[RMDB]
RNA sequence: GGGAACGACUCGAGUAGAGUCGAAAAAAAAGAUAUGGACAUGUGUUACAGCCCAAGCAAGAAGACAUAUCGGAAACGAUAUGAAUCUUUGAUGACCUUGGGAAGGUGGCAUGUCCUAAGUCAAAAAGAUAAAGAGUUAGUUCGCUAACUCUUUAUCAAAAGAAACAACAACAACAAC
Reactivity to 2A3 in 0.01 (KOAc 150mM, MgCl2 10mM, bicine 150mM(pH8.5), 24C), signal-to-noise 2, nucleotides 027 to 126: a000a000a000a050g020a000u030a020u040g000g000a000c000a000u010g020u040g070u290u290a060c040a070g040c000c010c000a000a000g000c000a040a110g000a010a000g010a020c010a010u010a000u000c000g010g000a010a010a010c010g000a000u010a000u000g060a060a110u010c010u000u040u020g190a290u040g010a020c010c000u000u000g000g000g030a020a040g120g020u030g040g000c000a010u000g000u020c000c000u000a000a000g000u000c020a070a000a030a000a200
Reactivity to DMS in 0.01 (KOAc 150mM, MgCl2 10mM, bicine 150mM(pH8.5), 24C), signal-to-noise 5, nucleotides 027 to 126: a080a080a090a070g000a030u000a070u000g000g000a030c010a010u010g000u000g000u010u000a030c070a180g000c010c000c010a000a010g010c000a060a030g020a000a000g010a070c020a010u000a000u000c010g020g000a020a020a040c000g010a010u000a000u000g000a120a100u000c000u000u010u010g010a070u020g000a110c300c010u000u000g000g000g000a010a020g020g020u000g000g000c000a010u000g000u010c000c000u000a000a030g000u010c000a070a040a060a120a090